[RMDB]
RNA sequence: GGGAACGACUCGAGUAGAGUCGAAAACGGACUUCGGUCCGGGAGUAUCCUAAGUCUCAUCCGUUUGACGCGAUAGGGAGUCCGCCAUCGGAAACGAUGGAUGGACGAAGAACUAUCGCCGAGGAUGAGAUAUGGAGAGUUUGCGGUUCGCCGCAAAAUGAAUUUGAUAUUUCGAUAUCAAAUUCAUAAAAGAAACAACAACAACAAC
Reactivity to 2A3 in 0.01 (KOAc 150mM, MgCl2 10mM, bicine 150mM(pH8.5), 24C), signal-to-noise 6, nucleotides 027 to 156: c000g010g020a000c000u060u090c300g120g000u020c010c000g010g040g000a070g040u110a060u050c010c000u050a170a030g020u000c000u000c000a000u000c010c020g110u120u230u280g090a090c040g000c010g000a000u000a000g000g010g010a020g020u000c000c000g030c020c010a000u000c000g020g050a120a070a070c010g000a010u010g010g080a190u130g000g000a000c000g000a050a030g030a010a010c000u000a000u000c000g000c010c000g020a010g000g000a000u000g000a000g000a000u010a010u020g010g000a040g010a020g100u020u050u050g000c010g000g040u060u100c230g050c090c020g000c000a010a000a010
Reactivity to DMS in 0.01 (KOAc 150mM, MgCl2 10mM, bicine 150mM(pH8.5), 24C), signal-to-noise 4, nucleotides 027 to 156: c010g010g000a030c000u000u010c300g030g010u000c000c000g000g010g010a120g010u010a080u000c010c000u000a090a230g020u000c000u000c010a060u000c000c000g040u000u000u010g010a150c150g010c000g020a030u000a010g010g010g010a300g020u000c000c000g000c000c000a010u010c000g030g010a210a100a250c020g020a020u000g010g010a040u000g050g010a020c010g020a040a130g010a160a170c010u000a010u000c010g020c000c010g000a090g010g010a020u000g010a030g010a010u000a050u010g000g000a070g010a160g020u000u010u000g020c010g010g020u000u010c300g030c030c010g020c010a000a010a080
Structure probing data (2A3 and DMS) for a 207-nucleotide construct.
High DMS reactivity at an A or C suggests that its Watson-Crick edge is free.
For DMS the reverse transcriptase was MarathonRT.
The reactions ran in a buffer of 150 mM KOAc, 10 mM MgCl2 and 150 mM bicine (pH 8.5), at 24 C.